Chemical mapping of a 177-nucleotide RNA with DMS and 2A3. For 2A3 the reverse transcriptase was SuperScript II with manganese. Values cover nucleotides 27 to 126. Conditions: 150 mM KOAc, 10 mM MgCl2 and 150 mM bicine (pH 8.5), 24 C.
[RMDB]
RNA sequence: GGGAACGACUCGAGUAGAGUCGAAAAGGGUUUGGAUUACAUCAAUAGUAUCAUGAGCAGAAGUAAACAGAACAAGAAGUACUGCGGUUAUUCAAGUUCAAAGUUCACACUAUCGCAAUAAAGGGAAUGCUAUAUAGGUGUUCGCACCUAUAUAGCAAAAAGAAACAACAACAACAAC
Reactivity to DMS in 0.01 (KOAc 150mM, MgCl2 10mM, bicine 150mM(pH8.5), 24C), signal-to-noise 4, nucleotides 027 to 126: g010g000g010u000u000u000g020g000a080u000u010a060c090a100u020c090a060a070u010a100g020u010a060u010c080a060u010g010a080g020c030a070g010a060a070g020u000a060a060a080c070a090g000a040a020c050a030a300g000a050a050g010u000a020c010u000g020c160g030g010u000u000a090u010u000c030a020a300g010u000u000c030a030a050a110g000u000u010c040a050c060a060c100u000a050u000c060g000c030a050a030u020a030a030a060g010g000g010a070a150
Reactivity to 2A3 in 0.01 (KOAc 150mM, MgCl2 10mM, bicine 150mM(pH8.5), 24C), signal-to-noise 2, nucleotides 027 to 126: g070g000g000u060u120u070g070g060a060u080u150a060c020a070u120c040a040a120u060a090g030u050a000u120c030a050u110g040a030g010c030a030g010a200a000g060u070a060a060a010c030a020g020a020a010c030a070a020g010a030a000g010u030a000c000u000g020c000g080g000u020u020a040u080u040c010a070a000g000u000u020c040a110a040a000g030u050u030c060a020c000a010c030u030a080u160c030g000c040a090a120u120a140a080a010g080g040g030a000a140